[RMDB]
RNA sequence: GGGAACGACUCGAGUAGAGUCGAAAAACUGCAAUGCCCUCGUAAUUAAGUGAAUUUACAAUAUCGUCCUGUUCGGAGGGAAGAACGCGGGAUGUUCAUUCUUCAUCACUUUUAAUUGAUGUAUAUGGAGGAGUAGUUGUUUCGACAACUACUCCUCAAAAGAAACAACAACAACAAC
Reactivity to DMS in 0.01 (KOAc 150mM, MgCl2 10mM, bicine 150mM(pH8.5), 24C), signal-to-noise 2, nucleotides 027 to 126: a110c080u010g010c160a090a080u010g000c010c000c000u020c040g010u000a040a060u000u000a060a100g000u000g010a020a070u000u000u000a080c230a050a040u000a050u010c020g030u000c010c010u000g000u000u010c100g030g010a070g000g010g010a050a150g000a090a050c070g000c060g000g010g010a070u000g040u000u010c080a080u000u000c070u010u010c120a020u000c000a040c110u010u000u010u000a040a110u000u010g000a020u010g000u000a090u000a070u000g050
Reactivity to 2A3 in 0.01 (KOAc 150mM, MgCl2 10mM, bicine 150mM(pH8.5), 24C), signal-to-noise 3, nucleotides 027 to 126: a000c050u110g020c030a060a080u110g010c020c010c010u000c010g080u120a110a070u100u040a050a030g040u020g120a070a150u090u080u090a060c060a080a020u010a050u170c030g000u000c010c000u030g040u090u090c060g090g020a030g120g040g040a010a040g030a050a010c050g000c090g020g020g000a000u030g020u040u060c050a030u080u000c010u090u040c030a040u030c000a010c020u030u080u100u140a070a090u070u060g030a080u050g070u080a050u020a070u260g110